[RMDB]
Source information
Conditions: 150 mM KOAc, 10 mM MgCl2 and 150 mM bicine (pH 8.5), 24 C. The record gives the reactivity of an RNA of 177 nucleotides to 2A3. Values are in units of 0.01, from 0 to 300, in steps of 10.
RNA sequence: GGGAACGACUCGAGUAGAGUCGAAAAUCGGUUUACGCAUCGUCAUCGAGAUCAAGCGCGAUGCGGUGGCCAAGGUGGUGAUCAAUAACCUUUACAAGCACACCCAGCUGCAGACCAGCUUUGGCGCACCAGUAUCCCGCUUCGGCGGGAUACUGGUAAAAGAAACAACAACAACAAC
Reactivity to 2A3 in 0.01 (KOAc 150mM, MgCl2 10mM, bicine 150mM(pH8.5), 24C), signal-to-noise 1, nucleotides 027 to 126: u190c060g000g160u000u000u050a010c110g000c000a000u000c000g100u000c000a090u090c110g270a100g090a130u150c170a190a050g030c000g000c000g060a000u030g000c000g040g000u020g020g000c000c020a000a020g110g000u000g010g050u110g130a010u000c010a030a000u000a150a050c000c000u000u000u110a150c180a050a000g000c000a080c000a000c020c030c000a000g030c030u130g000c080a000g040a130c010c000a010g020c000u130u010u110g050g000c070g010c000
Description
The 2A3 profile rests on 477 reads.